[RMDB]
RNA sequence: GGGAACGACUCGAGUAGAGUCGAAAAUGGGCGAUGGCGGACUUCAGCCAGAUUUCGUUGGCGUAGACGUUCAUGUCCACCGCGUCGGUCGGACCGCCGCACAGAAUGCCGCGCUGGUAGAACGCGACUUCCAGUAGAGGUUCGCCUCUACUGGAAGAAAAGAAACAACAACAACAAC
Reactivity to DMS in 0.01 (KOAc 150mM, MgCl2 10mM, bicine 150mM(pH8.5), 24C), signal-to-noise 3, nucleotides 027 to 126: u000g010g000g030c010g010a040u000g020g000c020g000g000a140c030u000u000c030a220g010c010c010a030g030a200u000u020u000c180g040u010u000g000g020c020g010u000a060g000a100c040g010u000u010c030a060u010g010u000c010c020a060c070c040g000c060g000u010c040g020g000u020c120g020g010a300c040c020g000c040c030g030c070a070c060a080g000a070a100u010g010c040c020g020c030g020c010u000g010g010u000a040g010a060a060c080g010c060g000a150
Reactivity to 2A3 in 0.01 (KOAc 150mM, MgCl2 10mM, bicine 150mM(pH8.5), 24C), signal-to-noise 3, nucleotides 027 to 126: u050g040g020g000c120g110a070u040g000g020c020g040g060a300c000u010u050c060a020g010c000c000a050g060a130u180u290u160c180g100u080u090g010g000c030g010u040a000g000a030c000g040u080u130c200a020u060g030u010c020c010a000c010c030g000c000g020u070c050g000g070u050c040g090g060a100c010c030g020c010c000g000c000a040c000a020g230a210a090u140g030c050c010g000c000g000c000u060g020g040u100a070g050a190a010c020g010c020g060a030